[RMDB]
RNA sequence: GGGAACGACUCGAGUAGAGUCGAAAAGCAAGGUGCAGGGGGAGGAAAGUCCGGACUCCACAGGGCAGGGUGUUGGCUAACAGCCAUCCACGGCAACGUGCGGAAUAGGGCCACAGAGACGAGUCUUGUAAACUAAAACAUUCGUGUUUUAGUUUACAAAAGAAACAACAACAACAAC
Reactivity to 2A3 in 0.01 (KOAc 150mM, MgCl2 10mM, bicine 150mM(pH8.5), 24C), signal-to-noise 8, nucleotides 027 to 126: g030c020a020a060g060g020u060g040c030a020g030g010g020g010g010a040g010g040a110a050a000g040u020c020c010g020g050a050c020u030c020c010a040c040a050g010g020g010c020a030g040g020g020u080g020u060u050g010g000c010u040a120a020c020a060g000c000c000a010u010c020c020a040c010g030g000c020a040a050c030g030u050g020c030g010g020a040a060u110a130g010g030g000c010c000a040c020a020g080a000g010a030c060g010a010g030u010c000u030u010
Reactivity to DMS in 0.01 (KOAc 150mM, MgCl2 10mM, bicine 150mM(pH8.5), 24C), signal-to-noise 7, nucleotides 027 to 126: g000c060a110a080g010g010u010g000c050a090g010g010g000g000g000a100g010g010a060a080a070g020u010c020c040g000g010a110c070u010c030c050a080c100a130g000g010g010c080a070g000g000g010u020g010u010u000g000g000c020u020a080a090c190a150g000c000c010a060u020c120c030a040c040g000g020c130a070a110c060g020u000g000c070g000g000a060a050u020a090g000g010g000c030c050a040c110a060g000a100g000a070c060g000a050g020u010c060u010u010

Structure probing data (2A3 and DMS) for a 177-nucleotide construct. The RNA was probed in 150 mM KOAc, 10 mM MgCl2 and 150 mM bicine (pH 8.5) at 24 C. For 2A3 the reverse transcriptase was SuperScript II with manganese. DMS adducts were read by reverse transcription with MarathonRT.